[RMDB]
RNA sequence: GGGAACGACUCGAGUAGAGUCGAAAAGGACGAUGAGUCAGUGGCCAGCCUGAUCAGCGAAGAAGAUGACGCGAGCUGGAAGCAGAGGUAUCUGAACCUCGCCCGCGACGCUGCAGACCUGCUGAUAACAACCUCUCGUAUUCGUACGAGAGGUUGUAAAAGAAACAACAACAACAAC
Reactivity to 2A3 in 0.01 (KOAc 150mM, MgCl2 10mM, bicine 150mM(pH8.5), 24C), signal-to-noise 2, nucleotides 027 to 126: g080g020a020c070g050a110u200g010a000g070u030c000a000g040u040g050g020c000c020a010g000c000c000u030g010a080u080c000a000g050c040g040a080a030g060a090a040g050a190u150g060a030c030g020c020g030a010g050c020u060g050g020a060a010g070c050a020g060a030g090g070u140a140u110c090u100g080a060a040c000c010u000c030g010c020c000c000g000c000g000a010c010g030c040u020g000c000a000g010a030c010c020u030g050c010u020g000a030u060a060
Reactivity to DMS in 0.01 (KOAc 150mM, MgCl2 10mM, bicine 150mM(pH8.5), 24C), signal-to-noise 3, nucleotides 027 to 126: g030g000a090c050g000a080u000g000a120g000u000c000a020g030u010g010g000c070c050a120g020c040c030u000g010a080u000c020a060g030c040g010a150a070g020a100a080g010a150u020g010a120c030g010c020g010a130g000c020u010g010g000a110a120g000c030a080g020a030g020g010u000a080u020c070u000g010a050a120c020c010u000c160g000c010c010c010g010c020g000a110c050g010c020u000g010c090a060g020a070c060c040u000g010c020u000g000a060u000a100